[RMDB]
RNA sequence: GGGAACGACUCGAGUAGAGUCGAAAACACGCCUGGUCUGGGAUCCAAUUUCCAUGUAAAAUUGCAAAAGACCAAGCACCAGAAGGCAUAACCAGUCAUCUUAACUGUGUGGGGCAGUCCUCAUGGGUAAGGGGACUCAAGGUGGUGGGCACCUGCCCUUCUGACGUAUAUUCGUAUACGUCAGAAGAAAAGAAACAACAACAACAAC
Reactivity to 2A3 in 0.01 (KOAc 150mM, MgCl2 10mM, bicine 150mM(pH8.5), 24C), signal-to-noise 5, nucleotides 027 to 156: c040a020c070g010c000c000u010g000g010u010c000u030g000g030g080a170u100c050c020a020a030u010u050u000c040c060a060u110g040u180a020a080a050a050u040u030g000c100a120a020a010a000g010a010c000c010a010a000g040c020a030c020c020a040g060a160a040g050g000c050a060u080a090a050c030c010a030g070u060c020a080u020c080u090u090a060a080c020u040g000u020g020u080g160g000g060g000c050a030g030u040c000c000u050c030a080u110g070g000g010u040a060a060g020g000g010g020a000c000u010c070a040a040g020g010u030g040g030u060g000g020g010c030a050c030c040u060g010c000c010
Reactivity to DMS in 0.01 (KOAc 150mM, MgCl2 10mM, bicine 150mM(pH8.5), 24C), signal-to-noise 3, nucleotides 027 to 156: c030a110c090g000c000c020u000g000g020u000c000u020g010g010g020a140u010c140c060a030a060u000u000u010c030c050a220u020g030u010a040a020a040a040u000u000g030c110a090a080a160a050g000a050c010c010a020a060g030c010a120c050c050a050g000a100a070g000g030c040a140u010a090a090c030c000a120g000u010c020a060u010c080u000u000a030a080c030u000g020u000g010u000g000g000g020g020c090a130g000u000c010c010u000c020a030u020g010g020g000u000a060a060g010g010g030g020a040c020u000c060a060a090g040g010u000g010g000u000g020g030g030c030a030c050c040u000g000c030c040
An RNA of 207 nucleotides, treated with 2A3 and DMS and read out base by base. The 2A3 profile rests on 5,043 reads. DMS adducts were read by reverse transcription with MarathonRT. The DMS profile rests on 7,380 reads.